[RMDB]
RNA sequence: GGGAACGACUCGAGUAGAGUCGAAAAAUGAGAUCCCAUCUUGCACACUGUGCUAAUUUGAGAUUCUCAUGCCUCCUACUUGGCGAGAUCUGGACUAGAAGUCAGGGCAUCUGACUCUGCCAGCCACAAAACGUACAAGGCUUCGGCCUUGUACGAAUCCCUAACUACACUUCGGUGUAGUUAGGGAAAAAGAAACAACAACAACAAC
Reactivity to DMS in 0.01 (KOAc 150mM, MgCl2 10mM, bicine 150mM(pH8.5), 24C), signal-to-noise 2, nucleotides 027 to 156: a020u000g020a040g020a080u010c000c000c000a030u000c080u000u000g010c000a040c020a240c170u000g010u010g010c020u000a020a010u000u000u020g020a040g000a060u000u000c000u000c000a040u000g020c120c060u000c040c010u010a090c130u000u010g000g000c020g000a180g000a130u000c000u010g000g040a060c050u000a060g010a140a040g020u000c020a030g010g000g050c220a180u010c020u000g000a020c010u000c020u000g010c010c020a090g050c050c020a100c070a060a080a210a170c020g020u000a000c000a020a020g000g010c010u000u000c300g070g020c000c000u000u010g010u000a010c020g000a050a050
Reactivity to 2A3 in 0.01 (KOAc 150mM, MgCl2 10mM, bicine 150mM(pH8.5), 24C), signal-to-noise 3, nucleotides 027 to 156: a000u010g000a010g000a000u000c000c000c010a000u000c020u000u030g010c020a020c040a060c180u300g020u020g000c060u100a030a090u010u010u030g020a020g010a030u300u040c000u000c000a000u050g010c000c030u000c010c000u050a150c080u070u130g090g000c070g060a080g030a160u070c010u030g000g030a090c080u100a100g030a130a020g090u000c010a020g030g100g160c060a150u140c090u000g000a000c000u010c000u010g010c000c020a020g000c030c010a080c030a060a150a070a010c020g000u000a000c000a000a010g000g000c010u060u070c130g050g000c010c000u000u010g000u000a000c000g000a010a010